Description
Structure probing data (2A3 and DMS) for a 177-nucleotide construct. The DMS profile rests on 3,220 reads. For 2A3, 5,114 sequencing reads were counted. Source: RMDB library M2PK50, as collected in RNAgym. The reactions ran in a buffer of 150 mM KOAc, 10 mM MgCl2 and 150 mM bicine (pH 8.5), at 24 C. For 2A3 the reverse transcriptase was SuperScript II with manganese.
[RMDB]
RNA sequence: GGGAACGACUCGAGUAGAGUCGAAAACGCCAGCGAUUCGUCGCUGGCGAAAUAAAUUGAGCGGUUUAAAUUUCGUCCGCAUAACCGCUGAUGCGGACGAAAAAAGGCAGUUGUUCGCAACUGCCAACCUUCCUUAAGUGUUCGCACUUAAGGAAGGAAAAGAAACAACAACAACAAC
Reactivity to 2A3 in 0.01 (KOAc 150mM, MgCl2 10mM, bicine 150mM(pH8.5), 24C), signal-to-noise 3, nucleotides 027 to 126: c000g020c000c000a000g020c000g020a030u060u090c180g020u020c000g140c010u000g000g000c000g000a000a000a000u010a000a050a030u130u130g030a030g020c040g040g120u080u190u220a070a170a100u070u120u000c010g000u000c000c000g000c020a000u050a040a040c040c030g000c080u040g000a010u100g000c010g000g000a000c010g000a000a000a000a000a000a000g000g010c010a010g000u000u000g030u040u080c180g000c080a010a000c000u000g000c000c000a000a000
Reactivity to DMS in 0.01 (KOAc 150mM, MgCl2 10mM, bicine 150mM(pH8.5), 24C), signal-to-noise 2, nucleotides 027 to 126: c030g010c000c000a000g040c010g010a040u000u000c150g050u000c000g040c000u000g000g030c000g000a000a030a050u020a060a120a130u010u010g000a070g020c030g020g000u000u010u010a050a110a140u000u000u000c000g010u000c000c000g010c000a000u010a060a080c030c030g000c050u000g000a050u000g010c010g000g000a010c010g010a010a000a020a050a080a060g000g010c010a010g010u000u000g020u000u010c180g010c010a030a010c000u000g010c000c000a020a020